[RMDB]
Description:
Source: RMDB library OK1LIB, as collected in RNAgym. This 177-nucleotide RNA was probed chemically with 2A3 and DMS. 2A3 adducts were read by reverse transcription with SuperScript II with manganese.
RNA sequence: GGGAACGACUCGAGUAGAGUCGAAAAACUAGUAUGUACAGGGGUGAGUUGACCUGUCAUCUAGACUGCUGACCAUCAACUCACCGGUCAGCUGGAUGAUGUCCACAGAGUACGACAUCAGUACUCAGUGUAAGGAUGCGUUCGCGUAUCUUUACACAAAAGAAACAACAACAACAAC
Reactivity to 2A3 in 0.01 (KOAc 150mM, MgCl2 10mM, bicine 150mM(pH8.5), 24C), signal-to-noise 9, nucleotides 027 to 126: a000c000u000a000g050u090a050u050g040u070a010c000a010g020g020g020g050u100g070a100g040u050u060g070a060c000c010u000g000u000c000a000u000c000u010a010g040a080c030u030g000c000u000g000a000c000c010a010u070c030a030a090c040u020c060a050c030c020g000g000u000c000a000g000c000u010g010g010a070u070g010a020u030g050u020c000c000a040c040a040g030a000g010u030a010c040g070a020c070a120u090c030a020g010u010a010c010u000c030a010
Reactivity to DMS in 0.01 (KOAc 150mM, MgCl2 10mM, bicine 150mM(pH8.5), 24C), signal-to-noise 9, nucleotides 027 to 126: a200c000u000a010g000u060a010u000g000u060a010c000a020g000g000g000g010u010g010a040g020u000u000g010a050c010c020u000g000u000c000a010u000c000u000a010g000a160c060u000g000c010u000g000a020c000c060a030u020c110a050a050c090u010c090a050c180c140g000g000u000c000a010g000c000u010g000g000a120u020g010a100u000g010u000c000c010a130c220a100g000a040g010u010a020c030g000a140c140a090u030c130a090g000u000a010c010u000c020a160